[RMDB]
RNA sequence: GGGAACGACUCGAGUAGAGUCGAAAAAUGGGCCUUAUAACACAGUACCUCAGAAAUAAUUAGCUAUGAUCAUGGCUGGGCAACCACAGGCCUCUCACAGUGGUACCUGUUCUGAAAAGACAGCAGAAGGGCUGAGCUGUACGCAUCCUUUGGCAGGCAGCCGUAGAGUAUUCGUACUCUACGGCUGAAAAGAAACAACAACAACAAC
Reactivity to DMS in 0.01 (KOAc 150mM, MgCl2 10mM, bicine 150mM(pH8.5), 24C), signal-to-noise 1, nucleotides 027 to 156: a090u000g000g030g000c030c000u010u000a050u000a090a100c040a090c080a070g040u000a040c040c030u010c030a130g000a150a040a060u000a040a070u020u000a110g010c060u010a040u000g010a060u000c040a080u000g010g000c030u000g030g010g050c040a060a060c030c010a030c080a100g010g030c030c010u000c060u000c030a040c090a060g080u000g040g010u000a110c060c020u000g020u000u000c070u010g000a080a090a060a100g000a040c050a030g030c010a040g020a080a000g000g010g010c010u010g010a050g000c100u000g060u000a110c080g000c040a150u000c060c010u000u020u000g010g010c030a170g020g020
Reactivity to 2A3 in 0.01 (KOAc 150mM, MgCl2 10mM, bicine 150mM(pH8.5), 24C), signal-to-noise 2, nucleotides 027 to 156: a000u070g070g010g020c010c000u140u120a170u080a210a080c120a030c010a040g040u090a070c010c020u070c020a040g120a030a050a060u210a000a030u190u100a030g000c010u050a030u130g040a100u160c040a050u060g020g000c000u040g000g030g000c050a080a000c030c000a010c010a030g070g030c050c000u020c000u110c010a050c010a000g020u040g020g000u020a040c000c000u030g040u110u010c020u030g000a010a020a060a010g040a020c040a020g050c000a000g010a040a000g040g020g000c010u010g040a000g000c030u060g030u070a030c030g000c020a020u100c000c020u080u040u110g080g040c080a060g030g040